Structure probing data (DMS) for a 177-nucleotide construct. The RNA was probed in 150 mM KOAc, 10 mM MgCl2 and 150 mM bicine (pH 8.5) at 24 C. The data come from the RNA Mapping Database (RMDB), library TTRDES. The DMS profile rests on 703 reads. Values cover nucleotides 27 to 126.
[RMDB]
RNA sequence: GGGAACGACUCGAGUAGAGUCGAAAAAAAAGAUAUGGAAGCAAUAAGACAGAACUAGUGGACUAUAUACUCGGAAACGAGUAUACGAAUCCACGCUAGUUCAAUGACGUUGCUUCCUAAGUCAAAAGUUUUAACCAUUCUUCGGAAUGGUUAAAACAAAAGAAACAACAACAACAAC
Reactivity to DMS in 0.01 (KOAc 150mM, MgCl2 10mM, bicine 150mM(pH8.5), 24C), signal-to-noise 1, nucleotides 027 to 126: a120a020a250a120g000a000u000a300u000g020g000a020a000g000c000a000a000u000a090a230g010a300c140a150g030a020a000c000u000a100g050u000g000g040a040c090u000a160u000a000u000a000c000u000c000g060g000a130a030a130c000g010a010g000u000a000u010a010c090g000a030a130u010c000c010a000c130g080c110u010a000g020u000u000c000a110a090u000g010a200c300g000u000u000g000c000u000u000c000c000u030a000a070g000u040c010a020a100a050a130